[RMDB]
RNA sequence: GGGAACGACUCGAGUAGAGUCGAAAAGUAGGUAUCGGUGGCUACAUGUCUCAAUCUUAUAUGCUGGUUCAAUAGAACAGCUUGUCCUUUACCGACAUCACUGCCAUGGGGUGGUAACACUUCCAAACAUAGCUCCUCGAUUCGUCGAGGAGCUAUGAAAAGAAACAACAACAACAAC
Reactivity to 2A3 in 0.01 (KOAc 150mM, MgCl2 10mM, bicine 150mM(pH8.5), 24C), signal-to-noise 8, nucleotides 027 to 126: g050u050a020g030g050u070a050u120c050g040g000u010g040g030c030u070a020c040a130u100g090u000c010u020c030a130a180u060c100u160u250a190u090a060u300g010c020u040g140g160u060u000c060a190a270u140a280g020a040a010c000a010g000c000u020u070g070u060c030c030u070u110u060a070c020c000g040a010c010a000u120c020a020c050u080g000c040c000a090u080g020g000g000g020u010g000g040u080a060a000c020a010c020u190u100c050c050a010a000a060
Reactivity to DMS in 0.01 (KOAc 150mM, MgCl2 10mM, bicine 150mM(pH8.5), 24C), signal-to-noise 2, nucleotides 027 to 126: g060u000a020g030g020u030a060u000c030g000g000u010g010g000c000u000a030c060a020u020g020u000c020u000c030a080a110u050c070u060u030a050u080a010u030g020c010u000g000g000u010u000c000a150a100u060a090g000a010a020c000a040g000c000u010u020g000u030c060c050u020u010u000a030c050c050g000a020c190a090u000c080a060c020u020g000c030c080a110u030g000g000g000g010u000g010g020u010a050a140c050a020c050u010u010c000c010a050a080a290
Source information: An RNA of 177 nucleotides, treated with 2A3 and DMS and read out base by base. Values cover nucleotides 27 to 126. The 2A3 profile rests on 6,011 reads. The data come from the RNA Mapping Database (RMDB), library OK1LIB.